[RMDB]
RNA sequence: GGGAACGACUCGAGUAGAGUCGAAAAAACAAAAUUGUUGGUGGUGCUCCUACAUGGUUUAAUGCGUUGCGUGACUUUACGUUAAAGGGUUAUGUUCUUGCUACCAUUAUUGUGUUUCUGUGUGCUGAGGGGUUCCUCUUCGGAGGAACCAAAAGAAACAACAACAACAAC
Reactivity to DMS in 0.01 (KOAc 150mM, MgCl2 10mM, bicine 150mM(pH8.5), 24C), signal-to-noise 1, nucleotides 027 to 129: a100a060c180a050a020a030a040u040u000g010u000u050g020g010u020g030g000u000g050c040u040c060c000u000a060c000a100u010g010g040u040u020u010a090a110u030g010c000g040u020u010g040c000g060u030g000a050c000u010u020u040a080c000g020u050u000a050a080a120g040g040g010u000u000a070u040g030u000u000c000u020u030g000c000u000a030c050c090a080u050u050a110u050u040g080u000g020u050u020u000c010u030g020u030g010u010g020c030u100g040a010g010g020
Reactivity to 2A3 in 0.01 (KOAc 150mM, MgCl2 10mM, bicine 150mM(pH8.5), 24C), signal-to-noise 2, nucleotides 027 to 129: a000a000c180a050a020a010a030u090u090g020u030u010g000g000u000g040g100u090g040c000u000c000c000u030a030c020a070u090g000g090u050u050u120a020a040u060g010c070g040u030u000g000c030g030u080g020a000c000u100u120u020a070c120g000u050u150a130a090a010g020g010g000u010u020a000u120g010u020u010c010u000u030g120c020u000a070c000c000a020u070u080a110u070u040g030u000g010u130u000u000c020u000g020u000g010u040g070c010u000g000a000g020g000
About this RNA:
The record gives the reactivity of an RNA of 170 nucleotides to DMS and 2A3. 2A3 adducts were read by reverse transcription with SuperScript II with manganese. For DMS, 12,545 sequencing reads were counted. Values are in units of 0.01, from 0 to 300, in steps of 10. The reactions ran in a buffer of 150 mM KOAc, 10 mM MgCl2 and 150 mM bicine (pH 8.5), at 24 C.